RNA sequence: GGGAACGACUCGAGUAGAGUCGAAAACUUAACGCGUUCGCGCGUUAAGAAACAACAUAAACAUCGAGUUGACGAUGACACAAAUAGCGUCAGUGUAGACGGAAAGCAUUCGCUUCGGCGAAUGCAAGCUGUGUUUAUCGUUCGCGAUAAACACAGCAAAAGAAACAACAACAACAAC
Reactivity to 2A3 in 0.01 (KOAc 150mM, MgCl2 10mM, bicine 150mM(pH8.5), 24C), signal-to-noise 4, nucleotides 027 to 126: c000u000u000a000a000c010g020c010g040u010u060c180g060c010g010c000g100u000u000a000a000g010a010a040a000c040a000a010c020a050u220a110a160a030c020a040u060c020g030a070g100u040u050g130a090c030g030a020u070g050a010c050a000c010a130a140a030u210a070g090c010g000u010c020a030g060u070g130u260a080g010a030c020g050g060a130a080a020g010c000a010u010u000c010g010c000u030u040c200g100g000c000g010a000a000u010g000c000a000a010
Reactivity to DMS in 0.01 (KOAc 150mM, MgCl2 10mM, bicine 150mM(pH8.5), 24C), signal-to-noise 3, nucleotides 027 to 126: c000u000u000a000a010c000g000c000g000u000u030c230g050c010g030c000g000u000u000a000a000g010a120a160a070c120a050a060c100a040u000a170a080a090c060a070u000c010g020a120g010u000u000g010a110c020g000a040u000g010a090c110a060c110a050a050a130u010a060g020c000g020u000c010a090g010u000g000u010a100g010a020c040g000g010a050a090a070g010c000a010u000u010c000g020c000u020u000c190g010g000c000g010a010a000u000g040c030a010a040